[RMDB]
RNA sequence: GGGAACGACUCGAGUAGAGUCGAAAAGGGGUCUCCGUUGAAAGCUUCGACAUGAGCGCACACUGAAGCCUCCACGGUGUGAUGCUCAACAGCGAAGCUGGAGGAGACGGAGGCACCCAAAUCUUGAGUAUCUGAGUUCGCUCAGAUACUCAAGAAACCUAUUUGCUUUCUUCGGAAAGCAAAUAGGAAAAGAAACAACAACAACAAC
Reactivity to 2A3 in 0.01 (KOAc 150mM, MgCl2 10mM, bicine 150mM(pH8.5), 24C), signal-to-noise 2, nucleotides 027 to 156: g090g010g030g000u030c020u020c020c000g070u080u030g030a020a000a010g000c000u000u010c000g150a180c100a300u280g000a000g000c000g000c010a000c000a000c000u030g000a090a010g060c000c000u030c030c000a030c010g000g000u010g000u010g010a180u120g000c010u000c030a150a050c100a030g010c010g020a020a020g020c000u000g000g000a010g000g020a030g010a010c020g000g000a000g010g000c000a070c000c000c020a070a180a080u040c000u000u010g000a000g000u000a000u000c000u010g000a000g040u030u150c230g080c110u000c000a000g000a000u000a020c000u010c000a010a000g000a000a000a000

This 207-nucleotide RNA was probed chemically with 2A3. Source: RMDB library RNAMAK, as collected in RNAgym. For 2A3 the reverse transcriptase was SuperScript II with manganese.